[RMDB]
RNA sequence: GGGAACGACUCGAGUAGAGUCGAAAAGUUAUGAGUGCCCUAUGCUGGAUGAGGGAGUGGAACCAGAUGAUGUCGAUUGCUGGUGCAACACGACAUCAACUUGGGUUGUGUACGGAACCUGUCAUCACACCUGCCAGUGCUUCGGCACUGGCAGGUGAAAAGAAACAACAACAACAAC
Reactivity to DMS in 0.01 (KOAc 150mM, MgCl2 10mM, bicine 150mM(pH8.5), 24C), signal-to-noise 1, nucleotides 027 to 126: g020u020u020a130u010g020a120g020u010g000c000c000c050u000a140u020g000c060u010g000g010a050u000g010a150g010g010g010a050g080u010g010g010a040a040c060c080a030g000a100u000g010a020u000g020u000c000g020a300u010u000g000c000u010g060g000u010g040c000a010a030c130a120c000g000a010c000a010u000c010a000a030c070u000u000g000g000g010u000u000g020u000g010u000a090c070g010g000a080a120c050c060u000g030u010c060a080u000c050a250
Structure probing data (DMS) for a 177-nucleotide construct. The data come from the RNA Mapping Database (RMDB), library OK2TRN. The DMS profile rests on 1,046 reads. Conditions: 150 mM KOAc, 10 mM MgCl2 and 150 mM bicine (pH 8.5), 24 C.